[RMDB]
RNA sequence: GGGAACGACUCGAGUAGAGUCGAAAAGAUAUGGAUAGGAACUACUCGGAACUGGAGCGUUGAAAAGCAGCUAGCUCGGAAACGAGCUAGCUGCUUGGAGCUCCUAAGUACGAGCCUAUCCUAAGUCCAUCUAAAUAAAGUUCGCUUUAUUUAGAUGAAAAGAAACAACAACAACAAC
Reactivity to DMS in 0.01 (KOAc 150mM, MgCl2 10mM, bicine 150mM(pH8.5), 24C), signal-to-noise 3, nucleotides 027 to 126: g000a070u000a290u020g010g000a040u000a010g000g010a080a020c020u030a300c010u000c010g010g000a220a190c300u000g000g010a010g020c000g020u000u010g000a210a100a020a010g030c010a010g050c010u020a030g000c000u000c010g020g000a050a080a180c010g010a060g050c000u000a010g020c000u000g000c000u000u000g000g000a170g010c010u000c000c000u000a000a000g020u010a110c010g000a020g000c010c000u000a010u000c000c000u010a040a080g020u000c030